RNA sequence: GGGAACGACUCGAGUAGAGUCGAAAAUCUGUAUCAAGGGGAAGAUGAGCAAUGCCCUUAAGGCUCAGCUAGGAUACAAAACCACGAUUUGUUAUUCUCUCAUGGACACCAACCCGUACCUGAACAAGUUGAUGUGGAAGGCUGAAUGCAAGAUCAAGUAAGUUUUCACUUUCGAGUGAAAACUUACAAAAGAAACAACAACAACAAC
Reactivity to DMS in 0.01 (KOAc 150mM, MgCl2 10mM, bicine 150mM(pH8.5), 24C), signal-to-noise 1, nucleotides 027 to 156: u000c040u010g000u000a040u000c030a100a050g000g000g030g000a080a130g010a050u000g010a000g000c030a120a080u000g060c000c000c030u010u000a080a120g000g020c000u000c040a080g000c000u000a170g020g000a100u000a150c040a030a020a050a100c030c030a070c090g040a150u010u000u000g020u000u010a030u000u000c050u000c030u000c100a200u000g030g030a140c030a020c040c030a020a040c070c010c020g050u040a120c050c040u000g010a040a130c010a040a080g020u010u000g000a030u000g000u000g040g030a100a190g000g010c030u000g000a050a050u000g010c000a030a030g000a200u000c090a030a250
Reactivity to 2A3 in 0.01 (KOAc 150mM, MgCl2 10mM, bicine 150mM(pH8.5), 24C), signal-to-noise 3, nucleotides 027 to 156: u010c010u010g010u010a020u100c050a070a060g050g010g010g010a060a010g040a090u040g020a030g010c060a050a050u160g050c000c010c000u030u140a130a100g000g030c000u020c050a000g010c010u110a050g020g080a030u040a060c010a030a050a000a060c070c020a020c140g070a080u000u070u000g060u090u070a080u140u010c040u000c010u010c020a040u110g080g010a040c020a030c130c000a070a070c020c000c000g070u060a110c000c010u050g010a050a030c040a130a030g010u040u050g130a090u090g040u060g000g040a040a070g000g000c000u000g070a050a040u050g020c010a030a040g060a060u200c020a060a040

The record gives the reactivity of an RNA of 207 nucleotides to DMS and 2A3. Reactivities are given for positions 27 through 156. The data come from the RNA Mapping Database (RMDB), library OK3TST. 2A3 adducts were read by reverse transcription with SuperScript II with manganese.